[RMDB]
RNA sequence: GGGAACGACUCGAGUAGAGUCGAAAAUCUACUCCCUUCGGGGAGUAGAAAAUAAACUUGACGAAUGCCGGUCAAGAAAAACGGCAUUCUAAGAUUGGCGAAAAAGGAACUCCUUCGGGAGUUCCAACGAUUAUAACUCGUUCGCGAGUUAUAAUCGAAAAGAAACAACAACAACAAC
Reactivity to DMS in 0.01 (KOAc 150mM, MgCl2 10mM, bicine 150mM(pH8.5), 24C), signal-to-noise 2, nucleotides 027 to 126: u000c010u000a000c010u000c000c000c000u020u020c200g030g010g010g000a010g010u000a000g000a010a010a040a080u010a130a090a140c050u000u010g000a220c260g000a010a000u000g010c030c010g000g000u020c120a080a060g000a070a030a090a040a040c010g000g000c010a000u000u000c000u000a060a100g000a150u000u000g000g000c090g040a030a060a080a110a090g000g010a000a030c000u000c000c010u000u010c130g000g000g050a020g030u000u000c000c000a030a010
Reactivity to 2A3 in 0.01 (KOAc 150mM, MgCl2 10mM, bicine 150mM(pH8.5), 24C), signal-to-noise 1, nucleotides 027 to 126: u010c000u010a000c000u000c010c020c000u000u070c220g050g010g000g010a000g000u000a000g000a010a000a010a010u030a000a030a040c010u000u070g120a000c000g010a000a000u000g020c010c000g060g010u230c140a110a230g270a250a090a010a000a000c010g000g000c000a030u000u030c000u000a010a000g030a080u140u280g120g110c120g090a050a020a000a120a140g000g000a000a010c010u010c000c010u010u080c220g050g000g000a000g020u000u000c000c000a000a000